[RMDB]
RNA sequence: GGGAACGACUCGAGUAGAGUCGAAAAUGGAUCUUCGGAUCCAAAAAAAUCCUAAGUCAAACAACAGCGCAGUUUAUAGCGACGAUCUGGUCGGAAACGACCAGGGAGCUAUGACUGCGACAUGUUUGAUAUGGAAAAAAACGGCGUUCGCGCCGAACAUUGUUCAAUAAUUCGUUAUUGAACAAUGAAAAGAAACAACAACAACAAC
Reactivity to 2A3 in 0.01 (KOAc 150mM, MgCl2 10mM, bicine 150mM(pH8.5), 24C), signal-to-noise 3, nucleotides 027 to 156: u070g000g000a010u020c020u060u040c200g100g000a000u000c000c000a150a010a000a110a000a000a130u100c080c000u130a240a070g020u000c000a000a010a000c020a060a060c050a100g040c010g020c010a010g000u030u100u200a030u000a010g010c000g170a290c020g000a030u000c000u000g000g010u000c010g000g060a120a070a140c010g000a000c020c000a000g010g000g000a000g000c020u010a010u000g000a000c000u000g000c000g000a000c000a010u010g010u000u000u010g010a020u020a050u080g020g050a040a110a020a000a050a010a050c020g020g010c000g020u060u090c200g010c000g020c080c000g000a010a000
Reactivity to DMS in 0.01 (KOAc 150mM, MgCl2 10mM, bicine 150mM(pH8.5), 24C), signal-to-noise 2, nucleotides 027 to 156: u010g000g020a010u000c000u010u020c300g050g000a020u000c000c000a000a000a000a100a140a080a080u000c000c010u000a090a300g020u020c010a010a010a030c000a030a080c090a060g010c000g010c000a020g010u000u000u000a030u000a020g020c000g000a090c200g000a030u000c010u000g010g020u010c000g030g010a150a090a280c010g000a010c000c000a010g000g000g010a030g030c000u010a000u000g000a020c000u000g020c010g000a010c050a130u000g010u000u000u010g010a030u000a300u000g060g000a010a000a090a100a120a050a170c020g000g010c010g030u010u000c120g050c020g030c020c000g000a050a080
An RNA of 207 nucleotides, treated with 2A3 and DMS and read out base by base. The RNA was probed in 150 mM KOAc, 10 mM MgCl2 and 150 mM bicine (pH 8.5) at 24 C. It was measured as part of the RMDB library RNAMAK. Values are in units of 0.01, from 0 to 300, in steps of 10.